[RMDB]
The record gives the reactivity of an RNA of 177 nucleotides to 2A3. The reactions ran in a buffer of 150 mM KOAc, 10 mM MgCl2 and 150 mM bicine (pH 8.5), at 24 C. Source: RMDB library RFM100, as collected in RNAgym.
RNA sequence: GGGAACGACUCGAGUAGAGUCGAAAAACACCGUUCCUCUUCGCAUUCUUUUUUACCUUCCCCUGAACGGGAGGCGUUUCGUCGUGUGAAACAGAAUGCGAAGACGAACAAUAAGGCCUCCCAAAUCAGCUGGGUUGAUAUUCGUAUCAACCCAGCUAAAAGAAACAACAACAACAAC
Reactivity to 2A3 in 0.01 (KOAc 150mM, MgCl2 10mM, bicine 150mM(pH8.5), 24C), signal-to-noise 2, nucleotides 027 to 126: a010c050a020c010c050g020u030u020c000c000u020c000u000u000c010g000c000a030u000u000c010u100u040u020u000u030u070a000c000c010u080u100c010c040c000c010u060g070a130a020c020g000g030g000a040g020g000c010g000u080u150u110c100g040u030c020g000u020g020u040g120a000a000a000c040a000g010a000a000u000g000c000g010a000a010g000a000c000g000a000a000c020a000a060u150a090a040g070g000c000c030u000c000c000c010a080a040a060u160c050